Structure probing data (DMS and 2A3) for a 177-nucleotide construct. For 2A3 the reverse transcriptase was SuperScript II with manganese. Source: RMDB library VIROID, as collected in RNAgym. The RNA was probed in 150 mM KOAc, 10 mM MgCl2 and 150 mM bicine (pH 8.5) at 24 C. The DMS profile rests on 1,030 reads. Values cover nucleotides 27 to 126. The 2A3 profile rests on 1,492 reads.
[RMDB]
RNA sequence: GGGAACGACUCGAGUAGAGUCGAAAAUAGUGAUGACCUCUCAGCCCCUCCACCUUGGGGUGCCCUAUCCGAGCACUGCUGUUUCGGUAGAAAGGCUAAGCACGUCGCAAUGACGUAAGGUGGGACUGGAAGGUAAAUGGUUCGCCAUUUACCUUCCAAAAGAAACAACAACAACAAC
Reactivity to DMS in 0.01 (KOAc 150mM, MgCl2 10mM, bicine 150mM(pH8.5), 24C), signal-to-noise 2, nucleotides 027 to 126: u010a040g000u000g010a060u000g000a090c110c120u000c090u000c020a090g000c000c000c000c000u020c020c000a010c000c020u000u000g010g000g010g000u020g020c000c020c000u010a080u000c000c010g010a030g040c010a040c250u010g010c160u000g010u000u000u030c010g010g000u000a010g000a030a070a180g000g000c000u000a020a080g060c300a040c010g010u000c010g020c210a150a130u020g020a030c030g000u000a000a000g050g010u000g000g010g020a130c260u000
Reactivity to 2A3 in 0.01 (KOAc 150mM, MgCl2 10mM, bicine 150mM(pH8.5), 24C), signal-to-noise 2, nucleotides 027 to 126: u060a000g160u020g040a060u110g050a100c030c020u080c020u010c000a020g000c000c010c000c000u000c000c000a020c010c010u000u000g000g040g000g000u010g030c000c000c000u000a000u000c000c010g000a000g000c020a070c140u300g140c110u050g150u140u300u020c000g000g020u010a000g000a010a010a010g040g000c000u010a030a020g000c070a020c010g000u000c000g020c240a220a220u290g010a000c000g000u010a000a020g010g010u040g000g010g010a000c070u020